An RNA of 177 nucleotides, treated with DMS and read out base by base. The data come from the RNA Mapping Database (RMDB), library M2PK50. The DMS profile rests on 645 reads. For DMS the reverse transcriptase was MarathonRT. The RNA was probed in 150 mM KOAc, 10 mM MgCl2 and 150 mM bicine (pH 8.5) at 24 C.
[RMDB]
RNA sequence: GGGAACGACUCGAGUAGAGUCGAAAAGCAAGAUGCUUCGGCAUCUUGCAGUCGUAGCCCGAUCGACAGAAUUACAGCUAUGUCGAACGAGGAAGAGCGCGCACAUCAUCCCUUUCGAGGGAUGAAAAAGCACAGUGUGCUUCGGCACACUGUGCUUAAAAGAAACAACAACAACAAC
Reactivity to DMS in 0.01 (KOAc 150mM, MgCl2 10mM, bicine 150mM(pH8.5), 24C), signal-to-noise 1, nucleotides 027 to 126: g000c020a010a000g000a000u000g000c000u010u020c210g030g010c010a020u010c000u000u000g000c000a000g010u010c040g040u000a120g010c010c000c000g000a070u000c000g000a010c000a000g000a220a110u000u010a170c300a160g000c020u000a130u010g030u000c010g000a000a130c050g030a160g000g000a020a050g000a120g000c030g030c030g000c150a100c250a070u040c000a010u000c010c000c000u030u000u000c170g010a000g010g030g010a000u000g000a000a050a030